This 207-nucleotide RNA was probed chemically with 2A3 and DMS.
The DMS profile rests on 5,959 reads.
It was measured as part of the RMDB library OK3TST.
[RMDB]
RNA sequence: GGGAACGACUCGAGUAGAGUCGAAAAAAUACAACAAGUCAAGGAAAGAUCACACUCUUGAGGCAAGACAGGCUAAAAAUGGAAAAAGCCUAUAAACGUCCAAGGGUGAGGCGAGCUAGGAUAAAUCUUGAUUGUUGCCAAGAUUGCCUUGAGAAGCCUUCGUAUCCUUAUUCGUAAGGAUACGAAGAAAAGAAACAACAACAACAAC
Reactivity to 2A3 in 0.01 (KOAc 150mM, MgCl2 10mM, bicine 150mM(pH8.5), 24C), signal-to-noise 5, nucleotides 027 to 156: a000a000u230a030c040a050a010c030a090a020g130u060c020a020a020g030g010a150a050a040g040a090u070c020a010c000a010c040u020c000u020u030g060a120g060g000c010a020a010g050a100c050a020g030g000c000u050a110a080a030a070a060u110g050g050a060a100a070a040a000g000c000c000u040a050u160a090a080a010c030g010u000c000c000a010a000g030g000g010u020g010a010g010g030c030g020a030g020c020u060a020g010g050a070u070a130a150a040u050c010u010u030g030a060u070u080g030u040u040g020c040c000a030a000g020a010u040u040g020c000c000u030u030g030a040g030a100a010g020c000
Reactivity to DMS in 0.01 (KOAc 150mM, MgCl2 10mM, bicine 150mM(pH8.5), 24C), signal-to-noise 3, nucleotides 027 to 156: a020a050u010a060c030a030a070c060a050a060g000u010c020a050a050g030g030a110a080a120g000a040u000c030a240c020a020c020u000c000u000u000g000a130g020g020c000a110a130g020a130c070a020g000g040c000u000a010a060a050a130a130u030g020g000a040a040a140a120a090g010c010c000u000a060u000a030a100a070c060g000u000c010c000a000a050g000g000g000u000g000a030g000g030c050g010a080g030c060u000a070g020g010a180u010a060a060a080u000c030u000u010g010a120u000u000g010u000u000g020c040c080a110a050g000a100u000u000g000c030c050u000u000g010a050g000a080a150g000c130